The record gives the reactivity of an RNA of 207 nucleotides to 2A3.
The data come from the RNA Mapping Database (RMDB), library OK3TST.
The reactions ran in a buffer of 150 mM KOAc, 10 mM MgCl2 and 150 mM bicine (pH 8.5), at 24 C.

RNA sequence: GGGAACGACUCGAGUAGAGUCGAAAAGGAUCUGAGUACUUAUAAGUGCGAAGUGAGUGAGGGUCUUACGAGCACGAAUUACAACCCUCUAUUAAGUAUCGAAGAUCGGCCGGAGAUCGAGAUACCACUAUUAACCGGCGACUGUACGAAGAUCCGACGAUCAUGAUCGUUUCGACGAUCAUGAUCGAAAAGAAACAACAACAACAAC
Reactivity to 2A3 in 0.01 (KOAc 150mM, MgCl2 10mM, bicine 150mM(pH8.5), 24C), signal-to-noise 1, nucleotides 027 to 156: g000g000a000u000c000u050g000a000g030u020a020c000u100u130a030u090a300a060g000u040g060c010g030a060a020g000u010g010a010g000u130g020a000g000g000g000u090c000u010u000a040c030g010a000g020c000a000c060g080a160a000u180u180a150c110a050a050c000c000c000u010c000u020a080u050u230a160a000g000u000a000u000c000g030a000a000g010a010u010c020g000g000c000c010g010g000a090g000a000u020c000g000a000g000a040u010a020c000c020a060c050u120a060u210u030a190a030c000c010g000g040c020g070a090c160u030g040u030a000c010g000a000a000g010a020u000c000c000g000a000